[RMDB]
Chemical mapping of a 177-nucleotide RNA with DMS.
For DMS, 866 sequencing reads were counted.
The RNA was probed in 150 mM KOAc, 10 mM MgCl2 and 150 mM bicine (pH 8.5) at 24 C.
Source: RMDB library OK2TST, as collected in RNAgym.
RNA sequence: GGGAACGACUCGAGUAGAGUCGAAAAUAAGUGCUUGCUGGGAAAUCUUGACCUAAAUUGUUGUCCUGACAUGCCCAGGCAUGUCUUCCAACUGGGUGACCAGAAAUUGAGUCAGUCGGAAACUGGAAGCGUUACUGAGAUUCGUCUCAGUAACGCUAAAAGAAACAACAACAACAAC
Reactivity to DMS in 0.01 (KOAc 150mM, MgCl2 10mM, bicine 150mM(pH8.5), 24C), signal-to-noise 1, nucleotides 027 to 126: u020a090a190g010u000g030c080u000u000g000c030u010g030g010g000a030a130a050u010c050u000u000g010a130c080c070u030a050a130a180u030u000g030u000u000g000u000c030c030u010g010a010c030a040u000g030c050c020c120a120g000g000c010a010u010g010u010c020u010u000c040c010a030a140c020u030g000g010g000u040g010a120c010c040a070g010a050a080a070u000u030g000a100g020u010c020a070g000u020c060g020g000a000a070a150c140u010g010g000a170